[RMDB]
RNA sequence: GGGAACGACUCGAGUAGAGUCGAAAAGUGUGCUAUGUGAAUAUUUGACGGCACUGUCAUGUUGCCCUCUCUCUAUAUAUAUCUUUUUUGAGAUAGGGUCUCACUCCAUCGCCCAGGCUGGAGUGCAUACUUACUAACGAUUCGUCGUUAGUAAGUAAAAAGAAACAACAACAACAAC
Reactivity to 2A3 in 0.01 (KOAc 150mM, MgCl2 10mM, bicine 150mM(pH8.5), 24C), signal-to-noise 7, nucleotides 027 to 126: g130u060g020u020g000c040u080a110u250g120u080g170a190a070u210a230u300u140u270g060a020c030g010g030c020a010c040u030g120u090c080a070u210g170u300u260g070c020c000c000u000c010u000c000u000c000u000a060u000a020u010a020u000a220u300c090u120u230u070u030u100u070g010a010g000a000u010a000g000g000g010u020c020u030c010a000c000u000c000c000a020u030c020g030c010c010c000a010g040g000c020u010g000g010a000g000u000g000c000a010
Reactivity to DMS in 0.01 (KOAc 150mM, MgCl2 10mM, bicine 150mM(pH8.5), 24C), signal-to-noise 9, nucleotides 027 to 126: g020u010g010u000g010c020u000a080u010g030u010g010a120a120u010a120u010u010u010g010a080c060g000g010c010a020c020u010g010u010c130a090u010g010u010u000g010c000c000c000u000c070u000c010u000c000u000a070u010a090u010a120u020a120u020c020u000u000u000u000u010u000g000a010g010a020u000a020g010g010g010u000c180u010c010a010c010u000c010c000a020u000c040g010c000c000c000a170g000g000c210u000g000g000a020g020u000g000c300a110